This 177-nucleotide RNA was probed chemically with 2A3 and DMS. DMS adducts were read by reverse transcription with MarathonRT. Conditions: 150 mM KOAc, 10 mM MgCl2 and 150 mM bicine (pH 8.5), 24 C. It was measured as part of the RMDB library OK2TRN. The 2A3 profile rests on 725 reads.
RNA sequence: GGGAACGACUCGAGUAGAGUCGAAAAAUACAAUGGACAGUAUAUCUCUUUCAUAUAUUUCAGGUAUGCGCCGUCUCAGCUAUUACGUAGAUAAAGCUUCCAAGAUUUCAUUGCCAUUGCGCAAGUACAUUAAGCUCUCGUUCGCGAGAGCUUAAUGAAAAGAAACAACAACAACAAC
Reactivity to 2A3 in 0.01 (KOAc 150mM, MgCl2 10mM, bicine 150mM(pH8.5), 24C), signal-to-noise 1, nucleotides 027 to 126: a000u100a020c070a010a050u090g030g060a020c020a040g060u030a030u020a030u060c030u040c000u080u180u120c140a060u200a060u090a140u240u170u090c060a010g020g030u000a040u050g040c100g030c050c120g020u000c010u010c040a020g000c010u040a090u290u100a110c060g070u100a040g010a090u050a010a120a000g020c020u070u000c110c030a110a020g070a160u120u210u070c210a080u030u050g000c000c010a170u120u140g000c020g040c040a020a050g030u040a040
Reactivity to DMS in 0.01 (KOAc 150mM, MgCl2 10mM, bicine 150mM(pH8.5), 24C), signal-to-noise 2, nucleotides 027 to 126: a060u010a090c070a120a110u030g010g030a050c100a070g010u020a020u000a040u010c000u010c060u020u010u010c080a130u000a080u010a070u000u000u000c160a070g000g000u010a020u010g020c140g050c120c110g000u000c040u000c110a060g030c090u000a050u000u000a020c090g030u000a070g020a080u010a050a060a100g000c080u010u000c030c050a030a090g010a110u000u000u000c080a070u000u010g000c000c010a130u010u010g000c160g000c040a020a060g010u000a120